The record gives the reactivity of an RNA of 177 nucleotides to DMS and 2A3. High DMS reactivity at an A or C suggests that its Watson-Crick edge is free. DMS adducts were read by reverse transcription with MarathonRT. The RNA was probed in 150 mM KOAc, 10 mM MgCl2 and 150 mM bicine (pH 8.5) at 24 C.
RNA sequence: GGGAACGACUCGAGUAGAGUCGAAAAGAUAUGGAUCCCGGGGAGGCUUUGAUCUAUAUCUGCUCGGAAACGAGCAGAGUAUAGGGAGCCUCAAGGGAUCCUAAGUCAAAAGCCCUCUUCGGAGGGCCCUUGUGAUAGACUUCGGUCUAUCACAAGGAAAAGAAACAACAACAACAAC
Reactivity to DMS in 0.01 (KOAc 150mM, MgCl2 10mM, bicine 150mM(pH8.5), 24C), signal-to-noise 2, nucleotides 027 to 126: g000a040u000a300u000g000g000a010u000c000c000c010g000g040g010g030a020g000g010c000u010u000u000g010a070u000c000u000a010u000a020u000c000u010g010c010u000c000g010g000a100a130a250c010g000a020g010c000a000g010a050g030u000a000u010a020g010g000g010a010g010c010c000u010c000a080a060g030g020g000a010u000c000c010u000a000a060g000u010c030a070a130a170a280g010c000c000c010u000c000u000u010c260g010g000a010g000g000g020c010
Reactivity to 2A3 in 0.01 (KOAc 150mM, MgCl2 10mM, bicine 150mM(pH8.5), 24C), signal-to-noise 1, nucleotides 027 to 126: g030a020u070a030u150g020g000a020u030c030c090c070g050g160g140g000a020g000g050c060u300u300u140g090a040u080c010u020a010u000a000u000c000u000g000c020u000c020g040g000a120a090a080c030g020a010g000c000a010g030a010g060u070a000u020a020g000g030g010a000g000c000c020u030c010a010a030g000g000g010a000u000c000c000u000a030a000g010u000c040a060a130a070a060g000c000c030c000u000c020u020u080c250g190g030a000g000g040g000c010